[RMDB]
This 207-nucleotide RNA was probed chemically with DMS and 2A3. Conditions: 150 mM KOAc, 10 mM MgCl2 and 150 mM bicine (pH 8.5), 24 C.
RNA sequence: GGGAACGACUCGAGUAGAGUCGAAAAAAAAGAUCACUACCUGGCCAAAAUUCAAGGUUAUUAAAGCCAACGCGUACACGUUUUCAUUUUCUUCCGUAUCUCCCAUGACCGUGCUCCCGACCAAGUAUAGACACUACAAGAUCACCAUGGACCUCGCAAACAAUGCUGAUUUCGAUCAGCAUUGUUUAAAAGAAACAACAACAACAAC
Reactivity to DMS in 0.01 (KOAc 150mM, MgCl2 10mM, bicine 150mM(pH8.5), 24C), signal-to-noise 2, nucleotides 027 to 156: a030a000a040a030g000a060u000c020a070c040u000a060c030c000u020g030g020c020c010a070a070a040a100u000u000c070a110a040g020g020u010u000a110u000u010a060a080a090g020c050c020a020a040c050g000c040g000u010a060c120a080c050g030u010u000u030u000c030a130u000u010u000u000c010u010u000c030c020g010u010a070u000c010u000c030c010c030a150u000g000a060c020c020g010u010g030c030u000c000c000c010g000a080c030c030a030a070g020u010a090u000a110g010a090c040a060c040u000a070c040a050a090g010a040u000c030a030c030c040a060u000g010g010a060c040c010u000c020g030c300
Reactivity to 2A3 in 0.01 (KOAc 150mM, MgCl2 10mM, bicine 150mM(pH8.5), 24C), signal-to-noise 2, nucleotides 027 to 156: a000a000a000a000g080a040u090c030a020c060u070a040c020c000u000g040g010c020c000a060a120a020a070u090u150c030a060a040g020g020u080u060a070u100u170a130a080a020g020c010c010a020a040c040g020c010g050u070a010c040a010c040g030u020u060u120u050c090a090u050u110u070u050c060u050u020c020c000g070u110a120u010c020u000c000c010c000a010u040g030a050c010c040g010u050g030c020u000c040c010c000g020a020c040c010a010a000g030u010a020u040a080g020a010c050a010c060u110a010c040a070a010g020a100u020c040a000c030c010a020u030g000g000a020c000c020u000c020g060c040